[RMDB]
Chemical mapping of a 177-nucleotide RNA with DMS and 2A3. For DMS, 2,193 sequencing reads were counted. Reactivities are given for positions 27 through 126. Conditions: 150 mM KOAc, 10 mM MgCl2 and 150 mM bicine (pH 8.5), 24 C.
RNA sequence: GGGAACGACUCGAGUAGAGUCGAAAAUGGCAUGCUGUCGUCGGUGGUCGGACUUGGGUUGUUCAACCCGCUAUCGGUGGGGGCCGGGUUGAUCCUCGGCCGGAUGGCAUAUAAAGAGGACAAACAACCCUCCUUCUCAGUUCGCUGAGAAGGAGGGAAAAGAAACAACAACAACAAC
Reactivity to DMS in 0.01 (KOAc 150mM, MgCl2 10mM, bicine 150mM(pH8.5), 24C), signal-to-noise 2, nucleotides 027 to 126: u060g020g010c110a080u000g000c010u000g000u000c080g000u030c050g050g040u000g000g010u030c040g000g010a020c100u000u010g000g030g050u030u030g000u040u000c150a040a090c000c000c030g050c000u000a040u000c170g000g010u000g000g000g000g000g000c030c000g010g020g000u010u000g010a040u030c100c000u000c010g040g010c000c010g000g020a030u010g000g000c000a090u060a150u070a060a090a200g000a080g000g040a070c070a080a000a180c280a030a090
Reactivity to 2A3 in 0.01 (KOAc 150mM, MgCl2 10mM, bicine 150mM(pH8.5), 24C), signal-to-noise 2, nucleotides 027 to 126: u100g130g000c080a030u060g000c020u040g020u090c070g030u030c020g020g030u100g020g060u030c040g020g020a050c110u100u090g110g070g000u040u030g020u110u120c030a010a070c040c000c010g000c010u050a100u110c100g040g000u020g060g040g000g000g000c000c000g000g000g000u000u120g040a090u050c000c000u040c000g020g000c020c010g000g090a040u040g030g000c020a000u060a000u090a140a150a030g120a030g020g060a060c060a060a180a000c020a020a060